An RNA of 177 nucleotides, treated with DMS and 2A3 and read out base by base. DMS (dimethyl sulfate) methylates the pairing face of unpaired adenines and cytosines. Values are in units of 0.01, from 0 to 300, in steps of 10.
RNA sequence: GGGAACGACUCGAGUAGAGUCGAAAACAUUUGCGCUUCGGCGCAAAUGAAAAUAAAAUAAGCUAGUUGCUCAUUUCUAGCCUAUAAUGAGAAAUAAAUAAAAAACGACGUGGUUCGCCACGUCGAACAUACUGAGAUUCUUCGGAAUCUCAGUAUGAAAAGAAACAACAACAACAAC
Reactivity to DMS in 0.01 (KOAc 150mM, MgCl2 10mM, bicine 150mM(pH8.5), 24C), signal-to-noise 2, nucleotides 027 to 126: c010a010u000u000u010g000c010g020c000u000u010c170g030g020c000g020c010a000a010a000u000g000a030a100a050a100u010a100a090a060a070u000a110a090g020c070u000a020g000u000u000g030c050u000c060a080u000u010u010c010u000a010g010c000c050u000a030u010a040a100u000g000a070g000a100a150a100u010a100a050a080u030a020a050a070a100a160a150c000g010a000c000g050u000g000g020u000u000c240g040c020c010a010c000g030u000c000g010a030a100
Reactivity to 2A3 in 0.01 (KOAc 150mM, MgCl2 10mM, bicine 150mM(pH8.5), 24C), signal-to-noise 3, nucleotides 027 to 126: c000a000u000u010u000g000c010g000c000u050u070c250g110g000c000g020c010a010a000a000u000g000a010a010a000a010u160a010a090a010a070u140a040a030g050c020u000a000g020u040u100g050c020u030c050a050u020u100u060c030u010a060g030c020c000u060a060u050a130a080u050g010a010g030a050a170a040u200a070a090a030u140a040a140a060a010a010a020c010g000a000c000g000u010g020g040u050u070c120g030c090c000a000c000g000u000c010g000a000a000
The reactions ran in a buffer of 150 mM KOAc, 10 mM MgCl2 and 150 mM bicine (pH 8.5), at 24 C.
The data come from the RNA Mapping Database (RMDB), library M2PK50.